[RMDB]
RNA sequence: GGGAACGACUCGAGUAGAGUCGAAAAGGGGGGAUCGUCCUCGUUAUUAACGUCAAAGCCAAUAAUAACUGGCAAAGAAAAACAAAACCUAGCUUUCGCUGCCUAAUAAGCAGUAGCAUAGCUGAUCCUCCGUGCAUCGCCCAUGUGCUACGGUAAGCGUAUCUAGAUCGUUCGCGAUCUAGAUACGAAAAGAAACAACAACAACAAC
Reactivity to DMS in 0.01 (KOAc 150mM, MgCl2 10mM, bicine 150mM(pH8.5), 24C), signal-to-noise 2, nucleotides 027 to 156: g040g000g000g010g040g010a040u010c030g000u020c000c000u000c090g000u010u000a070u000u000a030a220c090g010u000c080a070a110a300g050c000c000a060a110u010a080a030u010a100a110c070u020g030g110c050a050a040a100g030a050a020a100a080a210c050a080a030a070a060c000c020u000a070g050c040u000u000u000c050g030c030u000g020c000c000u010a050a120u020a090a070g030c000a010g020u000a070g050c110a000u000a010g030c020u020g010a050u020c060c010u000c010c020g020u000g060c030a020u000c060g070c010c010c000a150u000g040u000g010c010u050a040c050g000g000u010a070a240g030
Reactivity to 2A3 in 0.01 (KOAc 150mM, MgCl2 10mM, bicine 150mM(pH8.5), 24C), signal-to-noise 3, nucleotides 027 to 156: g000g010g010g000g000g010a060u170c010g050u120c000c020u000c020g030u040u090a150u110u050a080a000c030g040u030c100a100a060a040g020c020c020a020a010u150a140a060u100a090a090c100u040g000g000c020a040a080a020g040a040a090a020a000a010c090a010a120a000a000c040c080u090a040g010c000u010u020u060c040g000c000u000g000c000c010u050a060a040u210a190a000g000c000a000g010u040a040g010c020a000u020a000g000c000u030g020a060u060c030c020u000c000c000g010u000g000c000a010u070c060g060c030c000c000a000u100g020u010g030c050u100a030c010g040g030u050a070a010g070
The record gives the reactivity of an RNA of 207 nucleotides to DMS and 2A3. For DMS the reverse transcriptase was MarathonRT. It was measured as part of the RMDB library ARCHII. The DMS profile rests on 2,328 reads. 2A3 adducts were read by reverse transcription with SuperScript II with manganese.